[RMDB]
RNA sequence: GGGAACGACUCGAGUAGAGUCGAAAAAGGAACUUUUGUAUAUGUUUUUGAUCAAUAUUUAGUUAUGUUAAGUAAAAUCAAAGCAUCAACUUAUCUUGGUGAAGCUAACAUCCAAUCACUCGGAAGCUGUCAAUUUGUACUCCGAAUACGUGCUUCCGACCCAUGUGCAAUUCGUUGCACAUGGGUCAAAAGAAACAACAACAACAAC
Reactivity to 2A3 in 0.01 (KOAc 150mM, MgCl2 10mM, bicine 150mM(pH8.5), 24C), signal-to-noise 1, nucleotides 027 to 156: a000g110g020a070a070c070u280u250u070u110g060u010a140u010a020u210g030u000u070u000u180u150g050a000u000c050a020a030u030a100u300u100u060a030g000u080u120a070u160g070u060u080a150a020g060u080a140a160a050a080u060c020a030a100a000g010c000a000u030c060a050a010c000u040u100a060u040c000u010u000g000g000u020g090a010a010g000c010u050a010a070c020a000u030c010c000a040a080u050c030a040c090u030c020g000g000a010a010g000c010u000g050u110c020a010a050u000u060u090g030u030a070c070u110c200c000g010a030a070u080a100c030g050u070g030c030u000u030c000c000

The record gives the reactivity of an RNA of 207 nucleotides to 2A3.
The data come from the RNA Mapping Database (RMDB), library OK3TST.
For 2A3, 366 sequencing reads were counted.
Reactivities are given for positions 27 through 156.
The RNA was probed in 150 mM KOAc, 10 mM MgCl2 and 150 mM bicine (pH 8.5) at 24 C.